[RMDB]
RNA sequence: GGGAACGACUCGAGUAGAGUCGAAAAGCAGCUUAAUUAGAAUAAAAUCUUAGGCUCCUUCUUAGAUAUAUUAUCUCUAGAUGUAUCAAUAGAAGUCAAAAUUAGAGAUCGCGAUAUGAACGGGCUUGUACGUUCCUACGCUAAAAUAAUACAAGAUGAGGUGUAGAUAGUUCGCUAUCUACACCUCAAAAGAAACAACAACAACAAC
Reactivity to 2A3 in 0.01 (KOAc 150mM, MgCl2 10mM, bicine 150mM(pH8.5), 24C), signal-to-noise 2, nucleotides 027 to 156: g010c000a000g020c000u020u050a060a050u140u180a130g080a080a110u180a160a170a080a110u050c000u010u030a010g040g010c000u040c010c000u070u030c020u040u080a010g000a010u020a010u000a010u070u070a130u020c010u000c020u020a010g010a060u010g020u020a000u000c010a080a030u070a180g050a040a010g060u090c040a000a000a240a000u100u020a000g000a000g000a020u050c030g000c010g030a090u010a010u050g000a000a000c000g020g000g000c030u010u030g000u000a000c000g000u000u000c000c000u000a020c000g000c000u030a010a020a050a060u170a090a150u090a050c010a020a000g020a020u030